[RMDB]
RNA sequence: GGGAACGACUCGAGUAGAGUCGAAAAAUAAAGUGCGUAAACGCGUCAUUGAGUGACGUGAAGAUCAUCCAAGUGUGCUGUCUACAGUCGUAGAUAGCGCACAUUACGCUAAGAUGAUCAUAAAAAAUCUACCAUUACACUUCGGUGUAAUGGUAGAAAAAGAAACAACAACAACAAC
Reactivity to DMS in 0.01 (KOAc 150mM, MgCl2 10mM, bicine 150mM(pH8.5), 24C), signal-to-noise 3, nucleotides 027 to 126: a080u000a050a030a160g000u010g010c000g020u010a030a090a220c070g010c010g020u010c000a030u010u010g030a210g020u000g000a020c000g010u010g000a100a080g020a000u000c000a000u000c020c160a070a060g020u000g000u010g000c000u010g000u000c000u000a010c000a170g020u020c270g010u010a000g000a010u000a000g020c000g000c000a000c000a050u000u000a020c000g000c020u010a100a120g000a020u000g000a030u000c000a130u010a020a020a070a070a080a070
Reactivity to 2A3 in 0.01 (KOAc 150mM, MgCl2 10mM, bicine 150mM(pH8.5), 24C), signal-to-noise 3, nucleotides 027 to 126: a000u300a000a030a030g130u090g020c000g010u030a000a010a150c000g010c010g000u010c010a050u070u300g160a120g300u030g020a030c010g000u010g070a040a020g010a010u020c000a010u000c010c040a060a130g010u000g000u000g020c000u000g000u000c000u000a040c070a270g170u250c210g000u110a000g000a010u010a000g000c000g000c010a000c000a000u000u030a000c000g000c010u040a030a030g010a010u000g000a010u020c060a060u280a020a090a020a000a000a030

Source: RMDB library M2PK90, as collected in RNAgym. The record gives the reactivity of an RNA of 177 nucleotides to DMS and 2A3. 2A3 adducts were read by reverse transcription with SuperScript II with manganese. DMS adducts were read by reverse transcription with MarathonRT. The RNA was probed in 150 mM KOAc, 10 mM MgCl2 and 150 mM bicine (pH 8.5) at 24 C. Values cover nucleotides 27 to 126.